Description
Chemical mapping of a 177-nucleotide RNA with 2A3 and DMS. For 2A3 the reverse transcriptase was SuperScript II with manganese.

RNA sequence: GGGAACGACUCGAGUAGAGUCGAAAAUUGAUGGGCAAUAGAGAAGUCAAUACACCUGUCUCACCAUGAAGUAAUGUAAACCUCAAUGUGUUAUCUGGCACAGUGGAUGUUCAAUAAAAGGUAAUUACAUAUUUUAAGUCUUCGGACUUAAAAUAUGAAAAGAAACAACAACAACAAC
Reactivity to 2A3 in 0.01 (KOAc 150mM, MgCl2 10mM, bicine 150mM(pH8.5), 24C), signal-to-noise 4, nucleotides 027 to 126: u080u070g020a030u050g010g020g000c030a070a120u120a070g070a020g020a110a010g010u080c040a030a010u090a120c040a030c020c040u050g050u040c030u020c030a070c020c020a020u100g070a060a030g040u150a070a050u160g060u090a030a090a060c000c020u030c040a050a070u070g020u000g010u090u090a160u090c130u150g040g000c010a010c010a050g040u030g040g010a060u080g050u080u070c050a080a060u120a150a130a020a010g070g010u030a000a040u090u050a030
Reactivity to DMS in 0.01 (KOAc 150mM, MgCl2 10mM, bicine 150mM(pH8.5), 24C), signal-to-noise 6, nucleotides 027 to 126: u000u000g000a060u000g010g010g020c080a070a120u010a100g010a080g020a130a090g020u000c060a060a070u000a110c110a100c040c020u000g010u000c030u000c060a100c050c030a070u000g010a070a080g010u000a050a050u000g010u010a040a080a070c050c030u000c040a060a050u010g020u000g010u000u000a050u010c150u010g000g000c030a030c030a060g010u010g010g020a070u010g010u010u010c060a050a080u010a050a050a080a060g010g000u000a050a070u010u010a130

The reactions ran in a buffer of 150 mM KOAc, 10 mM MgCl2 and 150 mM bicine (pH 8.5), at 24 C.